The record gives the reactivity of an RNA of 307 nucleotides to 2A3. 2A3 adducts were read by reverse transcription with SuperScript II with manganese. The reactions ran in a buffer of 150 mM KOAc, 10 mM MgCl2 and 150 mM bicine (pH 8.5), at 24 C.
RNA sequence: GGGAACGACUCGAGUAGAGUCGAAAAGUAUUGCUUCGGCAAUACAAGAAUAGACGUGAGUCUAUUCAGUUAGGACGGUGACGUCCUAACAGGCAGGCGUGAGCCUGCCACAUCCGCUUCGGCGGAUGAGAGUCUCUUCGGAGACUCAGGUAACACGUGAGUGUUACCAACGAGUUGGCUUCGGCCAACUCGAGCCUCUGACGUGAGUCAGAGGCAAGAGGAUCGUUCGCGAUCCUCAAAAGCAGUCCCAGCUCUGCAUUGGGAAUAGAUAACCGUUCGCGGUUAUCAAAAGAAACAACAACAACAAC
Reactivity to 2A3 in 0.01 (KOAc 150mM, MgCl2 10mM, bicine 150mM(pH8.5), 24C), signal-to-noise 2, nucleotides 027 to 266: g000u000a000u000u000g000c010u050u070c180g070g000c000a000a000u000a010c010a000a090g010a000a000u000a000g010a000c020g080u110g100a070g010u000c000u000a000u000u000c000a000g000u000u000a000g000g010a020c040g020g030u090g050a030c010g000u000c000c000u000a000a010c000a010g000g000c000a010g020g000c120g190u210g070a090g030c000c010u000g020c000c000a000c000a010u020c000c020g040c050u040u050c240g150g000c000g020g000a000u000g010a040g010a000g000u000c000u000c000u130u130c300g110g000a010g000a000c010u000c000a020g010g010u010a010a000c010a010c020g050u070g100a070g010u000g040u010u000a000c010c000a010a010c020g010a010g000u000u010g010g020c010u080u130c300g110g000c000c000a000a000c000u000c000g000a070g020c010c000u020c010u000g010a010c000g040u030g040a020g000u000c000a000g000a020g010g000c000a010a020g000a000g010g010a000u030c020g010u080u070c250g040c020g070a000u000c000c010u000c010a030a010a000a000g000c020a030g020u010c020c010c020a010g020c040u120c170u300g110c070a190u120u060g010g000g060a010a030u030a040